The data come from the RNA Mapping Database (RMDB), library RFM130. This 207-nucleotide RNA was probed chemically with 2A3 and DMS. The RNA was probed in 150 mM KOAc, 10 mM MgCl2 and 150 mM bicine (pH 8.5) at 24 C. For DMS, 11,893 sequencing reads were counted. Reactivities are given for positions 27 through 156.
RNA sequence: GGGAACGACUCGAGUAGAGUCGAAAAAGCAGAUUGAUGAUGAAACAAUUUCUCCAAGCGUUUGUUACGCUGACAUCCAUAUAUGAUGGAGGGCUAUGUUACCAUAGCCUUCAUAGUUUUCAAUCUGAACCAUCUAAAUACUAGGUUCGCCUAGUAAGUGUUUAUAUACGUUCGCGUAUAUAAACACAAAAGAAACAACAACAACAAC
Reactivity to 2A3 in 0.01 (KOAc 150mM, MgCl2 10mM, bicine 150mM(pH8.5), 24C), signal-to-noise 6, nucleotides 027 to 156: a000g020c000a000g010a010u000u010g000a010u010g010a010u080g040a070a080a050c070a110a180u130u170u080c130u070c100c090a110a020g000c020g000u060u130u140g130u180u220a010c010g000c010u030g020a040c020a040u010c030c020a040u090a030u050a050u300g090a030u050g080g010a000g010g000g000c000u000a000u030g050u170u190a060c150c000a000u000a000g000c000c000u000u020c000a010u010a000g010u040u040u030u040c000a000a010u010c000u010g010a020a020c010c000a010u060c010u110a110a100a150u060a040c000u010a000g020g000u030u040c170g060c030c000u000a000g000u010a030a050
Reactivity to DMS in 0.01 (KOAc 150mM, MgCl2 10mM, bicine 150mM(pH8.5), 24C), signal-to-noise 4, nucleotides 027 to 156: a160g020c010a020g010a020u000u010g000a050u000g010a080u000g000a160a140a150c080a090a190u000u000u000c030u010c040c040a120a040g030c010g010u000u000u020g020u000u000a070c010g020c000u000g000a130c020a030u000c040c050a170u000a190u000a070u020g000a060u000g010g010a030g030g030g030c010u000a010u000g010u000u000a200c200c030a020u000a010g000c000c010u000u000c040a060u000a090g000u000u000u010u010c010a020a020u010c020u000g000a070a200c030c020a130u010c070u000a090a110a230u000a030c020u000a030g000g010u000u000c300g010c010c010u000a010g010u000a030a180